[RMDB]
RNA sequence: GGGAACGACUCGAGUAGAGUCGAAAAAAAAGAUAUGGAGGAUGCUCCCCACCGGUACGCACGUGAUGACCGCUCGUCGGAAACGACGAGCGCAAGCGUGAAACCGAGGCAUCCUCCUAAGUCAAAACUAUCGCAUACUGUUCGCAGUAUGCGAUAGAAAAGAAACAACAACAACAAC
Reactivity to DMS in 0.01 (KOAc 150mM, MgCl2 10mM, bicine 150mM(pH8.5), 24C), signal-to-noise 2, nucleotides 027 to 126: a070a050a100a030g000a070u000a050u000g010g000a000g010g010a030u030g020c030u000c140c000c000c010a300c060c020g000g000u000a040c300g050c000a010c000g030u000g000a090u000g000a090c300c000g030c000u000c000g030u000c000g010g000a030a030a080c030g020a000c000g000a030g000c030g030c020a030a080g000c000g030u000g000a030a050a010c020c020g000a130g000g000c020a000u000c000c000u000c000c000u000a010a050g010u000c030a030a040a110a180
Conditions: 150 mM KOAc, 10 mM MgCl2 and 150 mM bicine (pH 8.5), 24 C. This 177-nucleotide RNA was probed chemically with DMS.